Chemical mapping of a 177-nucleotide RNA with 2A3. 2A3 adducts were read by reverse transcription with SuperScript II with manganese. Source: RMDB library OK1LIB, as collected in RNAgym. 2A3 is a SHAPE reagent: it acylates the 2'-hydroxyl of flexible nucleotides of all four kinds. For 2A3, 1,001 sequencing reads were counted. Conditions: 150 mM KOAc, 10 mM MgCl2 and 150 mM bicine (pH 8.5), 24 C. Values cover nucleotides 27 to 126.
RNA sequence: GGGAACGACUCGAGUAGAGUCGAAAAUUGUAAUUAUCUAAAUCAAGCCUAGCUGUUCUUGAAUAUAAUUCAUAAGCCUUUUCUAGGUUAUCUAUUUCUGAGGCAAUAAUAGAAUAAAUACUAGAAGCCUAGGCUACGAUUUCGAUCGUAGCCUAGGAAAAGAAACAACAACAACAAC
Reactivity to 2A3 in 0.01 (KOAc 150mM, MgCl2 10mM, bicine 150mM(pH8.5), 24C), signal-to-noise 3, nucleotides 027 to 126: u100u080g090u060a030a040u010u010a050u020c080u090a000a300a170u040c020a000a000g030c020c000u150a110g060c080u160g120u190u090c030u080u040g000a140a040u080a000u010a090a020u000u010c020a000u030a180a060g050c000c000u070u170u020u010c000u000a020g010g000u020u010a020u050c000u000a040u000u060u000c100u180g090a070g010g200c020a020a030u060a110a000u010a000g040a030a060u120a080a060a040u160a170c010u000a000g020a030a010g010